Description: This 177-nucleotide RNA was probed chemically with DMS. The RNA was probed in 150 mM KOAc, 10 mM MgCl2 and 150 mM bicine (pH 8.5) at 24 C. The DMS profile rests on 2,427 reads.
RNA sequence: GGGAACGACUCGAGUAGAGUCGAAAAGAUAUGGACUCCGCACUGUCAUCGAUCAUGCCCCUACUCUGUCGGAUCGGAAACGAUCCGAGCAGAGUAGGGGCAUGGGAGACAAACGGAGUCCUAAGUCGUCAAUAUGAUACUUCGGUAUCAUAUUGACAAAAGAAACAACAACAACAAC
Reactivity to DMS in 0.01 (KOAc 150mM, MgCl2 10mM, bicine 150mM(pH8.5), 24C), signal-to-noise 2, nucleotides 027 to 126: g020a090u010a300u000g000g000a030c000u010c000c000g010c070a150c300u000g000u000c020a300u000c170g020a140u000c000a000u000g000c020c000c020c000u010a000c000u000c010u000g040u000c000g010g000a020u000c000g010g010a100a140a180c000g010a010u000c000c000g000a070g020c000a000g000a020g010u000a020g000g000g000g020c000a000u000g000g000g010a090g010a030c030a050a120a210c010g000g010a030g000u000c000c000u000a010a130g010u010c120